RNA sequence: GGGAACGACUCGAGUAGAGUCGAAAAGAUAUGGAUAAGAUCAGCCGAAGAACUAUUGAACGCGCUAGUCAAUGUCGGAAACGACAUUGACUAGCUAAGCAAUAGGGAGGCUGGCUUAUCCUAAGUCGUAAUGCUAGUUGUUCGCAACUAGCAUUACAAAAGAAACAACAACAACAAC
Reactivity to 2A3 in 0.01 (KOAc 150mM, MgCl2 10mM, bicine 150mM(pH8.5), 24C), signal-to-noise 2, nucleotides 027 to 126: g030a020u120a070u130g030g000a000u030a000a050g160a300u170c000a020g000c010c000g220a300a040g020a030a000c020u030a010u000u030g060a140a060c160g130c070g000c300u000a000g020u000c010a000a010u010g010u010c000g020g000a020a050a050c000g000a020c000a000u000u000g000a010c000u010a010g000c010u000a010a010g000c000a010a000u000a000g030g000g020a000g000g000c000u010g000g000c000u020u000a010u010c000c000u010a050a010g090u010c070
Reactivity to DMS in 0.01 (KOAc 150mM, MgCl2 10mM, bicine 150mM(pH8.5), 24C), signal-to-noise 2, nucleotides 027 to 126: g010a080u000a300u020g000g010a010u000a000a020g010a130u020c000a000g020c000c000g000a170a160g000a130a240c000u000a000u000u000g000a040a060c040g030c300g000c000u000a000g010u010c020a000a010u000g000u010c000g020g000a030a050a170c000g010a030c020a000u000u000g000a000c000u010a000g000c000u000a000a040g010c010a020a000u010a020g000g030g020a070g040g040c010u010g000g010c010u000u000a000u010c000c000u010a010a040g010u000c080
The record gives the reactivity of an RNA of 177 nucleotides to 2A3 and DMS. Conditions: 150 mM KOAc, 10 mM MgCl2 and 150 mM bicine (pH 8.5), 24 C. 2A3 adducts were read by reverse transcription with SuperScript II with manganese. Values cover nucleotides 27 to 126.